[RMDB]
This 177-nucleotide RNA was probed chemically with DMS. In probing experiments dimethyl sulfate is read out at A N1 and C N3, which are open when not base-paired. The reactions ran in a buffer of 150 mM KOAc, 10 mM MgCl2 and 150 mM bicine (pH 8.5), at 24 C.
RNA sequence: GGGAACGACUCGAGUAGAGUCGAAAAGAACAGCUGCUUCGGUCGCCGCGGAUCACUGGCGUCCAGCGGAGAAACAGGAGCUCGUCUCCCUCCUUUCGCUGCUGGCUCCACAUCCGAUCGUCGCUGACAAUUUUGGGUAGUUCGCUACCCAAAAUUGAAAAGAAACAACAACAACAAC
Reactivity to DMS in 0.01 (KOAc 150mM, MgCl2 10mM, bicine 150mM(pH8.5), 24C), signal-to-noise 1, nucleotides 027 to 126: g000a130a120c080a140g030c080u000g020c100u000u010c050g010g000u000c040g010c030c030g020c040g000g000a010u000c050a030c080u000g000g000c040g000u010c010c000a020g010c000g000g000a060g010a020a010a010c220a100g000g000a030g020c030u030c280g030u020c030u000c010c020c010u010c200c140u000u000u000c010g020c000u000g020c000u000g000g000c020u000c020c010a000c090a030u000c020c010g000a050u010c040g020u000c050g010c060u000g020a180